Chemical mapping of a 207-nucleotide RNA with 2A3. The reactions ran in a buffer of 150 mM KOAc, 10 mM MgCl2 and 150 mM bicine (pH 8.5), at 24 C. For 2A3 the reverse transcriptase was SuperScript II with manganese. For 2A3, 1,240 sequencing reads were counted. Values cover nucleotides 27 to 156.
[RMDB]
RNA sequence: GGGAACGACUCGAGUAGAGUCGAAAAACAAUGCUUCGGCAUUGUAAAAAGAUAUGGACGCUCUUAUAGCAUCGAUCGGUACUCGGAUCGGAAACGAUCCGAGGUACCGGGAGCUAUUGGAGCGUCCUAAGUCAAAAAAGCACGGUUCGCCGUGCAAUCCAUCUAGUAGCUUCGGCUACUAGAUGGAAAAAGAAACAACAACAACAAC
Reactivity to 2A3 in 0.01 (KOAc 150mM, MgCl2 10mM, bicine 150mM(pH8.5), 24C), signal-to-noise 1, nucleotides 027 to 156: a000c000a000a010u000g000c000u050u110c250g250g010c000a000u000u030g000u010a020a020a000a070a010g060a030u050a030u120g000g000a000c000g020c000u000c020u000u010a000u000a020g000c010a300u200c070g110a070u070c000g000g010u030a000c000u020c000g000g000a000u000c000g030g040a010a120a010c010g000a000u000c000c000g000a040g010g020u000a000c000c000g000g000g000a000g000c000u000a000u000u030g010g000a000g000c000g010u000c000c000u000a000a000g000u000c000a000a000a000a000a070a000g120c120a000c070g000g020u070u120c300g010c130c000g030u000g000c000a000a000